[RMDB]
RNA sequence: GGGAACGACUCGAGUAGAGUCGAAAAAGUUUAGAUUUCGAUCUAAACUAGACCACUAAGAGGAUGACGAGUGACUACGACGCAUCUAGUAGAAAGCGCCCAGCUGUGAGCAGUUCGCUGCUCACAACUGCGUGGUUAGAUUCGUCUAACCACGCAGAAAAGAAACAACAACAACAAC
Reactivity to 2A3 in 0.01 (KOAc 150mM, MgCl2 10mM, bicine 150mM(pH8.5), 24C), signal-to-noise 1, nucleotides 027 to 126: a000g010u010u010u000a010g000a000u070u020u040c230g070a010u000c000u000a000a000a020c000u000a010g040a010c040c030a040c060u060a090a120g070a040g230g040a030u090g000a070c020g010a020g070u120g030a080c070u030a010c170g050a010c040g000c020a050u030c020u020a030g030u020a030g100a140a180a050g010c010g030c000c030c060a020g050c020u060g000u000g010a000g000c000a010g040u020u100c210g000c060u000g000c000u000c000a020c000a000a010
Reactivity to DMS in 0.01 (KOAc 150mM, MgCl2 10mM, bicine 150mM(pH8.5), 24C), signal-to-noise 1, nucleotides 027 to 126: a020g030u000u000u000a000g010a010u000u000u020c210g000a030u010c000u000a010a000a000c000u000a010g000a220c040c030a090c160u010a050a070g000a070g040g030a090u000g000a080c060g010a140g010u000g010a130c100u000a060c060g000a110c070g000c030a040u000c020u000a160g010u000a080g000a030a070a110g000c090g010c030c030c040a050g020c050u000g000u000g000a010g000c010a010g000u000u000c150g000c000u000g010c000u000c000a000c000a010a000